Overview:
Structure probing data (DMS and 2A3) for a 177-nucleotide construct. The DMS profile rests on 12,097 reads. It was measured as part of the RMDB library OK1LIB. 2A3 is a SHAPE reagent: it acylates the 2'-hydroxyl of flexible nucleotides of all four kinds.

RNA sequence: GGGAACGACUCGAGUAGAGUCGAAAAGGUUUUUAUCGCACGGUUGCCCCAGUGUGAGAAGGCUCCGGUGGAUUGCUCUAUUGGUUUGGGCUGUGUAAUGGUUGCGCGCUGAGGGUAUAACCAUUGGCUAAAUAUUAUUUUUCGAAAUAAUAUUUAGAAAAGAAACAACAACAACAAC
Reactivity to DMS in 0.01 (KOAc 150mM, MgCl2 10mM, bicine 150mM(pH8.5), 24C), signal-to-noise 4, nucleotides 027 to 126: g000g000u000u010u010u020u020a050u020c060g000c070a060c080g000g000u010u010g000c020c030c020c020a090g010u000g010u000g010a070g010a100a130g010g000c020u020c020c020g010g020u020g000g010a070u020u030g000c080u010c030u000a050u010u020g010g020u010u030u020g010g010g010c020u010g000u010g010u020a050a070u030g010g010u010u010g010c060g010c030g010c040u000g010a100g000g000g000u000a040u030a060a030c020c010a120u020u010g000g010
Reactivity to 2A3 in 0.01 (KOAc 150mM, MgCl2 10mM, bicine 150mM(pH8.5), 24C), signal-to-noise 4, nucleotides 027 to 126: g070g000u050u010u020u080u130a190u120c040g000c020a020c060g000g020u040u050g000c000c000c000c010a020g000u000g010u020g020a060g060a060a050g070g000c010u000c030c010g000g020u030g020g040a040u030u140g020c010u000c000u020a090u050u120g100g050u080u110u120g030g000g020c020u020g030u010g020u090a080a080u140g100g000u080u070g040c020g000c010g000c020u020g040a180g030g030g000u040a060u080a140a020c010c010a030u040u090g060g000